[RMDB]
RNA sequence: GGGAACGACUCGAGUAGAGUCGAAAACGCUGGGCUGCUACAAGAUCAUACGGGAGCUGAAGCGCGCACGGCUUUGAUCGUAUGAAUCUUUGAGCAGCCUGUGCUGAAGCGCGCACGGCAACCGAAAGGUGCGAAGGCACUGAGUUCGCUCAGUGAAUCCUUCAGUCUCGUUCGCGAGACUGAAGGAAAAAGAAACAACAACAACAAC
Reactivity to 2A3 in 0.01 (KOAc 150mM, MgCl2 10mM, bicine 150mM(pH8.5), 24C), signal-to-noise 1, nucleotides 027 to 156: c030g050c060u060g000g000g010c040u040g030c000u230a300c120a070a000g000a000u000c000a000u000a000c000g010g000g040a030g000c020u040g110a190a050g070c020g000c000g000c100a020c050g000g030c020u300u220u070g000a020u000c000g000u000a000u000g070a300a130u000c050u100u110u200g010a000g010c010a000g000c000c000u000g000u020g000c040u050g100a210a150g000c000g000c000g000c020a000c060g000g030c000a010a000c090c070g020a070a040a040g130g000u040g020c070g000a150a180g090g040c000a000c000u000g000a000g000u020u280c300g000c260u000c000a000g020u030g060a010a130
Structure probing data (2A3) for a 207-nucleotide construct. 2A3 adducts were read by reverse transcription with SuperScript II with manganese. For 2A3, 540 sequencing reads were counted.